[RMDB]
RNA sequence: GGGAACGACUCGAGUAGAGUCGAAAAGCGAAUUCGUUAACCACAUGCGUUCUCAUGCAUUGGGACCACAAAUGCGAUGUCAUGUAUGUGCUCUGACAUUCACUAGCAGAUUAUUGCUUGAGGCUCACCGCACUCCUGAUUUCGAUCAGGAGUGCGGAAAAGAAACAACAACAACAAC
Reactivity to 2A3 in 0.01 (KOAc 150mM, MgCl2 10mM, bicine 150mM(pH8.5), 24C), signal-to-noise 2, nucleotides 027 to 126: g040c030g000a000a070u180u140c080g020u040u040a080a070c050c000a010c030a020u030g040c000g080u160u110c060u010c050a050u030g000c010a010u000u020g060g100g050a100c050c050a070c090a030a110a010u040g010c140g050a040u030g000u040c010a020u020g030u150a030u050g010u050g000c000u000c020u030g010a020c000a030u020u010c030a010c060u000a040g050c070a010g040a130u080u030a150u260u080g020c000u000u020g020a040g070g040c040u030c030a080
Reactivity to DMS in 0.01 (KOAc 150mM, MgCl2 10mM, bicine 150mM(pH8.5), 24C), signal-to-noise 1, nucleotides 027 to 126: g000c010g000a060a010u000u010c240g010u050u000a050a120c220c010a010c070a000u000g040c010g000u000u000c030u010c010a030u010g000c050a030u000u000g010g000g040a150c210c160a060c090a040a040a000u000g000c000g000a050u000g000u000c060a000u000g030u000a000u000g010u000g020c030u000c040u000g000a040c000a070u010u000c010a050c040u000a070g010c220a120g000a040u010u020a070u020u000g010c020u010u000g000a060g000g000c040u000c090a140